[RMDB]
RNA sequence: GGGAACGACUCGAGUAGAGUCGAAAAGGAACUAUGUUCUGUCCUGAAGCCUCCACAGGUCCGCGAAAGCGAUCGGAAACGAAUGAGCAUAGUUCAGAGCUGAAGGAGGCACGGCUCAAAAUAAAAACGAGCAUGAAGUGUUCGCACUUCAUGUUCGAAAAGAAACAACAACAACAAC
Reactivity to 2A3 in 0.01 (KOAc 150mM, MgCl2 10mM, bicine 150mM(pH8.5), 24C), signal-to-noise 6, nucleotides 027 to 126: g130g000a000a000c000u000a000u010g000u000u010c040u090g080u000c000c000u000g030a080a010g000c000c000u000c000c000a010c000a000g000g000u000c020c060g000c010g060a080a030a030g020c010g010a070u050c010g010g030a020a020a010c020g010a020a030u020g000a000g000c000a000u000a000g000u000u000c000a010g000a000g000c000u010g020a120a020g010g000a000g000g000c010a000c000g000g000c000u000c000a040a050a010a000u050a010a030a010a010a010
Reactivity to DMS in 0.01 (KOAc 150mM, MgCl2 10mM, bicine 150mM(pH8.5), 24C), signal-to-noise 6, nucleotides 027 to 126: g000g000a000a000c000u000a000u000g000u000u000c000u020g020u000c000c000u020g000a110a140g010c000c000u020c010c000a300c000a000g010g000u000c030c100g020c000g010a160a080a120g010c010g000a020u010c000g010g000a070a050a090c020g010a020a040u010g000a010g000c000a010u020a010g010u000u000c000a050g010a010g000c000u000g010a100a130g010g010a010g000g020c000a300c030g000g000c000u010c000a130a050a060a060u030a050a060a060a090a120

The record gives the reactivity of an RNA of 177 nucleotides to 2A3 and DMS. The data come from the RNA Mapping Database (RMDB), library OK1LIB. Conditions: 150 mM KOAc, 10 mM MgCl2 and 150 mM bicine (pH 8.5), 24 C. Values cover nucleotides 27 to 126.